RNA sequence: GGGAACGACUCGAGUAGAGUCGAAAAGCCAUUGCAUGUAACUCUUUUAGGUGAUAGGAAUGGGCAUUUAUUAUGCUAGAAGUCAGUGAAAGUUAAGUAAGCAGAAGCUGUCCUUUUUAACAACAGCUUCAGGCCUAUCAACUCUAUGUGGAUAGAACUCACUGCAUAGUUUCGACUAUGCAGUGAGAAAAGAAACAACAACAACAAC
Reactivity to 2A3 in 0.01 (KOAc 150mM, MgCl2 10mM, bicine 150mM(pH8.5), 24C), signal-to-noise 2, nucleotides 027 to 156: g020c000c030a060u030u090g050c070a020u070g040u120a120a100c030u020c000u060u160u090u080a070g000g020u090g010a040u070a040g000g060a030a040u090g030g000g000c010a010u020u090u020a090u150u060a050u090g020c010u020a010g000a080a020g040u070c040a010g020u020g120a070a020a020g000u080u090a070a030g060u050a080a000g050c030a020g000a030a000g000c000u000g040u110c010c010u190u180u060u050u110a140a100c070a000a000c000a020g000c000u030u000c000a000g000g080c000c030u060a050u050c020a000a090c010u000c020u090a090u140g070u100g080g050a010u010a090g080a080a060
Reactivity to DMS in 0.01 (KOAc 150mM, MgCl2 10mM, bicine 150mM(pH8.5), 24C), signal-to-noise 1, nucleotides 027 to 156: g000c030c040a120u000u000g000c040a090u000g020u000a030a150c060u000c010u000u000u000u000a000g060g020u000g000a100u010a040g010g030a090a030u010g020g050g030c030a050u000u000u010a080u040u010a030u010g020c020u000a080g010a090a100g000u000c030a050g010u010g010a060a070a100g000u000u000a070a070g000u020a030a120g060c010a300g030a030a000g020c000u000g000u030c020c080u010u050u020u010u010a050a150c010a040a000c020a010g010c000u000u000c010a100g030g010c020c040u000a030u000c020a050a080c050u000c030u000a050u000g010u000g000g000a080u010a060g000a090a220
Description:
Chemical mapping of a 207-nucleotide RNA with 2A3 and DMS. Reactivities are rounded to 0.1 and cut off at 0 and 3. The reactions ran in a buffer of 150 mM KOAc, 10 mM MgCl2 and 150 mM bicine (pH 8.5), at 24 C. For 2A3, 1,206 sequencing reads were counted. 2A3 adducts were read by reverse transcription with SuperScript II with manganese.